The record gives the reactivity of an RNA of 177 nucleotides to DMS and 2A3. Source: RMDB libraries RFM100 and RFMREP, as collected in RNAgym.
RNA sequence: GGGAACGACUCGAGUAGAGUCGAAAAUGGAUUUAAUUAUGUAGGACCAAAACAUUCCUCAGUAAAUUAGCUUGCUAAAUAUUGUUACUUUUGUGAUUCUGCCUUUGAGAAACAGCUUAAUUACUGAUACUGAUCAGUACUUCGGUACUGAUCAGUAAAAAGAAACAACAACAACAAC
Reactivity to DMS in 0.01 (KOAc 150mM, MgCl2 10mM, bicine 150mM(pH8.5), 24C), signal-to-noise 3, nucleotides 027 to 126: u020g010g010a140u000u020u000a090a110u020u040a110u030g000u010a020g020g010a120c030c030a020a030a110a100c190a130u000u000c040c030u000c020a020g000u030a040a020a120u010u000a030g000c030u010u040g020c020u000a060a030a100u030a080u000u010g000u020u020a030c030u000u000u010u000g010u000g030a030u000u010c060u000g000c040c060u010u000u010g010a160g000a120a100a100c160a060g010c020u000u000a020a020u030u000a020c010u000g000a300
Reactivity to 2A3 in 0.01 (KOAc 150mM, MgCl2 10mM, bicine 150mM(pH8.5), 24C), signal-to-noise 6, nucleotides 027 to 126: u090g020g040a020u040u110u180a160a170u180u240a190u240g110u090a030g000g080a020c020c030a000a000a010a090c050a050u070u050c010c010u020c010a000g030u050a000a030a150u050u030a010g040c040u050u130g000c060u120a070a080a040u250a140u090u140g030u070u050a110c040u040u120u100u170g070u030g040a080u050u080c040u040g070c050c020u030u120u120g140a110g070a040a080a020c030a010g000c000u020u050a010a030u020u010a040c010u010g030a020